[RMDB]
RNA sequence: GGGAACGACUCGAGUAGAGUCGAAAAUCAUUGGUCGCGAGUGUACAAAUUGCCUCUUAUGACAUGGUACGUAUUGGGGACUGGAUUGAAAUGCCAUCGCUCAAUGCUGAUGGUGAUGUCAUUGAUAACGUGACUGCUCGUUCGCGAGCAGUCACGUAAAAGAAACAACAACAACAAC
Reactivity to DMS in 0.01 (KOAc 150mM, MgCl2 10mM, bicine 150mM(pH8.5), 24C), signal-to-noise 1, nucleotides 027 to 126: u030c050a040u000u020g010g030u000c030g000c020g010a020g010u000g020u010a070c100a050a070a100u000u000g020c000c010u000c170u000u000a080u000g020a050c050a030u020g040g030u000a030c100g020u000a080u000u000g000g000g010g000a090c080u010g000g020a040u000u020g030a060a090a030u000g020c000c000a040u030c050g000c020u020c290a060a030u030g010c020u020g010a030u010g020g040u000g010a020u000g020u000c040a010u000u010g000a090u030a060
Reactivity to 2A3 in 0.01 (KOAc 150mM, MgCl2 10mM, bicine 150mM(pH8.5), 24C), signal-to-noise 1, nucleotides 027 to 126: u090c020a000u060u100g040g000u020c020g000c020g120a050g010u170g020u080a030c070a000a210a050u160u010g070c010c010u110c100u110u170a080u120g030a040c070a020u020g030g000u050a020c030g000u030a100u060u060g000g040g030g010a010c020u010g050g030a120u050u110g060a080a130a020u180g060c000c000a000u000c020g020c040u000c010a090a130u130g000c080u140g070a030u150g010g130u070g010a020u010g020u000c020a000u040u000g050a070u120a160